[RMDB]
RNA sequence: GGGAACGACUCGAGUAGAGUCGAAAAGCCGCAUCCUGUCAGCGGCGAACCAUCUCUGGGAUUCACCACCUAUGGCAAGGUCAAACUCGGCAACCUUAGGGCGCGCCCACAACUGGCCGUCACGUUCUGCUCUGUUUCUAUUCGUAGAAACAGAGCAAAAAGAAACAACAACAACAAC
Reactivity to 2A3 in 0.01 (KOAc 150mM, MgCl2 10mM, bicine 150mM(pH8.5), 24C), signal-to-noise 2, nucleotides 027 to 126: g040c000c000g040c020a060u100c050c060u090g060u120c070a040g020c000g000g000c000g010a000a010c000c000a070u010c060u000c040u110g070g010g060a090u100u070c030a050c060c010a010c000c020u060a070u080g040g000c010a030a070g000g000u020c040a090a000a070c040u030c040g000g000c000a110a120c010c020u080u160a110g050g040g000c020g000c000g010c010c040c000a100c020a090a090c050u050g030g000c090c010g030u040c050a040c110g060u060u010c020
Reactivity to DMS in 0.01 (KOAc 150mM, MgCl2 10mM, bicine 150mM(pH8.5), 24C), signal-to-noise 3, nucleotides 027 to 126: g010c020c020g030c040a070u020c040c070u010g010u000c090a110g030c020g010g020c000g000a030a130c030c020a080u000c090u000c070u000g000g000g000a160u000u010c050a110c020c010a090c080c030u000a090u000g020g000c050a060a050g000g020u000c050a050a080a120c080u000c060g000g020c020a110a110c080c040u010u000a100g020g030g010c050g000c180g030c030c010c070a030c090a070a080c100u000g000g010c010c020g020u010c050a090c060g010u000u000c110

An RNA of 177 nucleotides, treated with 2A3 and DMS and read out base by base. The RNA was probed in 150 mM KOAc, 10 mM MgCl2 and 150 mM bicine (pH 8.5) at 24 C. For 2A3, 2,369 sequencing reads were counted.